[RMDB]
RNA sequence: GGGAACGACUCGAGUAGAGUCGAAAAUGUCAGACAGUAGCGAGGGAUGCAAUUAAUUGCAUCUACACCAAGCUCAAGGCUUGGAUUUCGACUAGUGUCGAGUCGUUCCCACUCGCUACGCCCACAAAGACCUAAAUCCUUUCGAGGAUUUAGGUCUAAAAGAAACAACAACAACAAC
Reactivity to DMS in 0.01 (KOAc 150mM, MgCl2 10mM, bicine 150mM(pH8.5), 24C), signal-to-noise 1, nucleotides 027 to 126: u000g000u010c090a130g000a110c190a090g000u000a010g030c010g020a040g000g010g040a000u000g020c000a010a020u000u030a110a150u010u010g010c010a000u000c000u010a070c110a190c010c030a000a020g000c000u000c300a200a070g000g010c010u000u020g010g000a300u000u000u000c000g010a020c000u000a040g010u010g020u020c000g030a020g000u000c000g010u000u000c000c000c000a000c010u000c000g000c010u000a000c000g010c050c040c050a060c180a060a060

Conditions: 150 mM KOAc, 10 mM MgCl2 and 150 mM bicine (pH 8.5), 24 C. The record gives the reactivity of an RNA of 177 nucleotides to DMS. The DMS profile rests on 866 reads. For DMS the reverse transcriptase was MarathonRT. Reactivities are rounded to 0.1 and cut off at 0 and 3.